[RMDB]
RNA sequence: GGGAACGACUCGAGUAGAGUCGAAAACGUCGUGAACUAGCGACAAUGCCGUAGAUCGAUCGUUAUCUAACCGAAACAUCGUGACUAGUCGUAGAAUAGAACCAGGAGGGGCCGCUGGCAAACAAAGACGUAGUCUCAGAUUCGUCUGAGGCUACGUAAAAGAAACAACAACAACAAC
Reactivity to DMS in 0.01 (KOAc 150mM, MgCl2 10mM, bicine 150mM(pH8.5), 24C), signal-to-noise 9, nucleotides 027 to 126: c130g000u010c020g010u010g010a130a080c110u020a090g000c010g010a030c030a110a090u030g010c030c020g000u020a070g010a120u010c030g010a050u010c120g010u010u010a080u010c040u020a100a090c200c110g000a050a050a060c090a040u000c040g000u010g000a110c060u000a050g010u010c010g010u010a070g000a070a090u020a080g010a080a110c050c040a060g000g000a070g000g000g010g010c020c030g000c040u000g000g010c060a060a070a070c130a050a090a070g010
Reactivity to 2A3 in 0.01 (KOAc 150mM, MgCl2 10mM, bicine 150mM(pH8.5), 24C), signal-to-noise 9, nucleotides 027 to 126: c050g010u010c000g010u020g060a090a060c060u020a060g010c000g010a010c000a020a050u100g040c010c010g030u040a030g010a080u030c020g000a010u010c070g010u030u020a130u070c040u050a030a090c040c030g010a020a020a010c010a020u020c020g020u020g040a040c020u030a020g040u030c030g040u040a030g060a120a060u100a080g050a060a030c030c020a030g010g050a040g010g020g020g000c000c010g000c020u020g010g000c020a040a060a020c020a020a130a010g090